[RMDB]
RNA sequence: GGGAACGACUCGAGUAGAGUCGAAAAACGCAUCAUACGUGAUGCGACGUCACGCCCGCUGUAAAAUGUAAUCAUCAGAGCGUCCUCUCAACCGCUUGGUGUUACUUCUUACAGUGAGUGCGACGAAACCAUGAGACAAGUUCGCUUGUCUCAUGGUAAAAGAAACAACAACAACAAC
Reactivity to DMS in 0.01 (KOAc 150mM, MgCl2 10mM, bicine 150mM(pH8.5), 24C), signal-to-noise 4, nucleotides 027 to 126: a130c020g010c010a000u000c010a050u010a100c220g010u020g000a000u000g010c000g000a160c020g000u010c010a030c000g010c000c010c000g000c000u030g000u000a010a000a020a010u000g000u000a010a010u030c020a010u000c000a090g020a020g000c000g000u010c100c120u030c170u030c180a130a180c240c000g010c000u000u000g010g000u000g010u000u000a010c000u000u000c070u010u010a010c010a000g010u000g010a030g010u000g000c040g000a010c000g000a100a130
Reactivity to 2A3 in 0.01 (KOAc 150mM, MgCl2 10mM, bicine 150mM(pH8.5), 24C), signal-to-noise 9, nucleotides 027 to 126: a000c010g000c000a000u000c000a010u040a110c270g110u050g010a000u000g000c010g010a050c010g010u010c010a010c040g000c000c000c020g000c000u000g000u010a000a010a020a030u080g000u030a040a020u230c030a000u000c010a020g030a010g290c010g030u110c030c060u210c050u070c070a060a140c040c000g000c010u000u000g000g000u010g000u000u000a000c000u000u030c020u000u000a000c000a000g000u000g020a020g000u050g000c020g000a000c010g010a140a010
This 177-nucleotide RNA was probed chemically with DMS and 2A3. For DMS the reverse transcriptase was MarathonRT. Source: RMDB libraries RFM100 and RFMREP, as collected in RNAgym. DMS (dimethyl sulfate) methylates the pairing face of unpaired adenines and cytosines.